The data come from the RNA Mapping Database (RMDB), library TTRINS. An RNA of 177 nucleotides, treated with DMS and read out base by base. The reactions ran in a buffer of 150 mM KOAc, 10 mM MgCl2 and 150 mM bicine (pH 8.5), at 24 C. DMS adducts were read by reverse transcription with MarathonRT.
[RMDB]
RNA sequence: GGGAACGACUCGAGUAGAGUCGAAAAGAUAUGGAAGGGACCAAGGCUGUUCGUUUGACGGGCAUUGUAAUCGGAAACGAUUACAAUGCCCCGAGAACAGAACUACCUUAAUUCCCUUCCUAAGUCAGUGUUUAGAAGUGUUCGCACUUCUAAACACAAAAGAAACAACAACAACAAC
Reactivity to DMS in 0.01 (KOAc 150mM, MgCl2 10mM, bicine 150mM(pH8.5), 24C), signal-to-noise 1, nucleotides 027 to 126: g000a000u000a300u020g000g000a010a010g010g000g020a170c300c170a160a020g000g000c050u000g000u000u000c000g000u000u000u000g000a300c300g000g030g030c030a000u000u000g000u000a000a000u000c050g010g000a130a110a180c000g000a020u000u000a000c000a000a030u030g020c010c000c000c000g030a250g000a000a020c000a130g000a000a000c000u020a070c000c000u000u000a060a300u000u000c000c000c000u000u000c040c000u000a000a200g000u000c090a060